[RMDB]
RNA sequence: GGGAACGACUCGAGUAGAGUCGAAAAGAUAUGGAGGACGUAGACAUGCUUAUCCACUCGGAAACGAGUGGUAAGAGCAACAGCUACGGUCCUCCUAAGUCAAAAUCUGCAUGUUCGCAUGCAGAAACCUCAUCUCCUUGUUCGCAAGGAGAUGAGGAAAAGAAACAACAACAACAAC
Reactivity to DMS in 0.01 (KOAc 150mM, MgCl2 10mM, bicine 150mM(pH8.5), 24C), signal-to-noise 1, nucleotides 027 to 126: g000a010u000a040u010g000g000a000g010g000a050c000g000u000a020g000a010c100a300u000g010c000u000u000a240u000c020c010a020c020u000c000g000g000a020a010a050c010g020a050g030u000g000g000u000a010a100g010a000g040c020a060a030c290a070g010c000u010a000c020g000g000u010c010c010u010c020c000u000a000a050g000u000c010a070a060a170a180u000c000u000g020c010a010u000g000u000u000c300g030c000a020u010g000c000a010g000a050a030a100
Reactivity to 2A3 in 0.01 (KOAc 150mM, MgCl2 10mM, bicine 150mM(pH8.5), 24C), signal-to-noise 2, nucleotides 027 to 126: g000a000u030a030u060g000g000a020g010g020a020c030g010u000a010g040a010c140a300u300g000c000u000u020a010u050c000c010a000c000u010c000g010g000a040a020a000c000g000a020g030u000g010g010u010a020a100g020a000g030c020a020a160c120a140g020c020u000a010c010g000g050u030c010c000u000c000c000u000a000a010g000u000c000a020a000a000a300u050c000u000g000c000a010u000g040u050u140c300g020c170a000u030g010c030a020g020a020a030a020
An RNA of 177 nucleotides, treated with DMS and 2A3 and read out base by base. The RNA was probed in 150 mM KOAc, 10 mM MgCl2 and 150 mM bicine (pH 8.5) at 24 C. The data come from the RNA Mapping Database (RMDB), library TTRDES. For DMS the reverse transcriptase was MarathonRT.